Chemical mapping of a 177-nucleotide RNA with 2A3 and DMS. The data come from the RNA Mapping Database (RMDB), library M2PK50.

RNA sequence: GGGAACGACUCGAGUAGAGUCGAAAAUUCAAGCGAUUCGUCGCUUGAACCUGAGGAGACUCAAGCAAAAUUCUUCCCUUUUGCUUUUGCUUUCCUCUUUUAAGUAGUAGUGCUUCGGCACUACUAAUAUUCUCCUGGUAUUCGUACCAGGAGAAUAAAAAGAAACAACAACAACAAC
Reactivity to 2A3 in 0.01 (KOAc 150mM, MgCl2 10mM, bicine 150mM(pH8.5), 24C), signal-to-noise 1, nucleotides 027 to 126: u030u000c000a010a000g000c000g040a000u040u100c190g050u000c000g180c030u000u000g000a010a010c010c000u000g010a010g000g000a020g010a010c000u000c020a000a000g030c000a020a000a010a120u230u130c070u080u120c010c000c000u010u010u000u020g000c000u000u000u000u000g040c020u010u050u000c000c000u000c010u020u030u020u050a080a010g000u010a000g000u000a000g000u000g010c000u020u070c170g070g000c000a000c000u000a000c000u000a000a000
Reactivity to DMS in 0.01 (KOAc 150mM, MgCl2 10mM, bicine 150mM(pH8.5), 24C), signal-to-noise 2, nucleotides 027 to 126: u000u000c010a000a010g000c010g010a020u000u020c220g020u000c000g020c000u000u010g000a000a070c020c030u000g010a000g010g010a020g010a020c000u000c040a000a000g000c010a000a010a000a010u010u020c210u010u000c020c020c020u010u000u000u000g000c000u000u000u000u000g000c170u000u000u000c000c010u000c000u000u010u000u000a070a110g000u000a010g010u010a010g010u000g010c000u010u010c180g020g000c000a010c000u000a000c000u000a010a060